An RNA of 177 nucleotides, treated with DMS and 2A3 and read out base by base.
The 2A3 profile rests on 723 reads.
Source: RMDB library OK1LIB, as collected in RNAgym.
Conditions: 150 mM KOAc, 10 mM MgCl2 and 150 mM bicine (pH 8.5), 24 C.
Reactivities are rounded to 0.1 and cut off at 0 and 3.
[RMDB]
RNA sequence: GGGAACGACUCGAGUAGAGUCGAAAAGAAGAGGGGAAUGCCCUCAGCGAAGACCAGCAAUGGCAAAAGGUCCGUCUGGUGACCUCCAUCGCCGCCGACGUCUGGUAAUUGCUUUCUUAGCGCAGCGUAGCAUCGGAUCGUUCGCGAUCCGAUGCUAAAAAGAAACAACAACAACAAC
Reactivity to DMS in 0.01 (KOAc 150mM, MgCl2 10mM, bicine 150mM(pH8.5), 24C), signal-to-noise 1, nucleotides 027 to 126: g000a060a300g050a080g000g000g000g020a170a000u000g000c000c000c000u000c010a060g010c030g020a070a050g030a000c080c090a020g220c090a030a070u090g000g000c250a110a040a150a070g000g050u000c000c000g090u000c020u070g000g000u000g000a000c020c020u000c090c140a090u000c000g000c010c240g000c060c000g000a180c120g000u070c040u040g000g000u000a000a020u050u050g020c080u000u040u000c000u030u030a030g020c140g000c040a000g000c120g000
Reactivity to 2A3 in 0.01 (KOAc 150mM, MgCl2 10mM, bicine 150mM(pH8.5), 24C), signal-to-noise 2, nucleotides 027 to 126: g180a080a010g050a030g000g010g000g030a260a130u220g110c000c000c000u000c010a000g000c010g050a020a000g050a030c060c000a000g000c040a190a060u100g000g060c000a010a000a070a130g000g020u000c000c000g080u110c160u240g130g020u130g030a010c000c000u050c030c030a200u170c030g000c070c000g000c050c010g070a050c090g040u130c000u000g000g010u010a000a080u020u130g040c000u080u010u000c020u040u130a050g020c090g030c150a050g000c100g100